[RMDB]
RNA sequence: GGGAACGACUCGAGUAGAGUCGAAAAGAUAUGGACUCGUUGAGUAAGACAUGCUCGAGCCUAGCAACAUCGGAAACGAUGUUUGGAACGAUACGAGCAACAGCUUACAUGGACGAGUCCUAAGUCACGGGUUAAGUAACUUCGGUUACUUAACCCGAAAAGAAACAACAACAACAAC
Reactivity to DMS in 0.01 (KOAc 150mM, MgCl2 10mM, bicine 150mM(pH8.5), 24C), signal-to-noise 2, nucleotides 027 to 126: g010a050u000a300u000g010g000a030c010u010c010g010u010u000g000a080g010u000a020a020g000a040c060a250u000g000c000u000c010g000a300g020c020c040u000a210g000c140a020a000c000a010u000c000g000g000a090a240a150c000g010a000u000g000u000u000u000g020g000a240a100c300g060a060u000a080c020g010a000g000c000a030a190c300a070g000c000u000u000a000c030a010u000g030g000a000c010g000a030g020u000c000c020u000a000a060g000u000c000a250
Reactivity to 2A3 in 0.01 (KOAc 150mM, MgCl2 10mM, bicine 150mM(pH8.5), 24C), signal-to-noise 2, nucleotides 027 to 126: g040a030u070a040u220g000g010a000c000u000c000g040u010u000g080a030g060u010a000a030g050a050c060a210u140g010c010u030c010g070a100g030c000c000u170a180g130c080a010a020c000a010u020c010g000g030a100a020a020c020g010a000u000g090u100u070u120g110g020a160a040c080g000a110u170a300c020g000a010g030c010a000a090c080a050g010c000u020u000a000c010a060u300g030g000a000c010g000a000g010u000c000c010u000a010a010g000u000c000a000

This 177-nucleotide RNA was probed chemically with DMS and 2A3. The data come from the RNA Mapping Database (RMDB), library TTRDES. The DMS profile rests on 1,021 reads. The reactions ran in a buffer of 150 mM KOAc, 10 mM MgCl2 and 150 mM bicine (pH 8.5), at 24 C.